Conditions: 150 mM KOAc, 10 mM MgCl2 and 150 mM bicine (pH 8.5), 24 C. The record gives the reactivity of an RNA of 177 nucleotides to 2A3 and DMS. The 2A3 profile rests on 823 reads. The DMS profile rests on 788 reads.

[RMDB]
RNA sequence: GGGAACGACUCGAGUAGAGUCGAAAAGAUCAAUUAUGAUUGCAAUGUAAUAUGUCAAGGCAGACAUAUCUAGCUGUCGCCUUAGCUAGAGAUGGCCGGUUUAUUGCUUUCAUAAGAACGGCAAGAACCAGUAUUUACGCUUCGGCGUAAAUACUGGAAAAGAAACAACAACAACAAC
Reactivity to 2A3 in 0.01 (KOAc 150mM, MgCl2 10mM, bicine 150mM(pH8.5), 24C), signal-to-noise 1, nucleotides 027 to 126: g000a140u180c050a020a080u020u010a010u040g010a010u020u000g050c000a000a000u060g030u220a120a100u150a080u280g210u120c040a170a020g000g000c000a000g040a300c040a000u070a030u000c000u000a000g020c000u040g020u100c090g220c050c120u060u050a010g000c000u000a000g010a000g000a020u030g010g020c030c020g000g000u010u020u100a000u000u010g000c000u010u000u020c000a000u000a030a010g060a120a030c020g070g010c110a130a020g020a130a080
Reactivity to DMS in 0.01 (KOAc 150mM, MgCl2 10mM, bicine 150mM(pH8.5), 24C), signal-to-noise 1, nucleotides 027 to 126: g020a050u010c100a120a210u010u000a010u000g010a000u010u000g000c010a000a040u000g000u010a050a070u020a060u010g010u000c160a110a130g010g010c020a150g000a300c110a040u000a040u000c040u000a010g000c020u010g000u020c110g000c120c080u000u000a010g040c010u000a010g010a020g000a080u000g010g000c020c020g010g010u000u000u000a040u010u010g010c000u000u000u000c010a000u010a020a000g000a050a100c180g000g000c100a060a130g000a130a110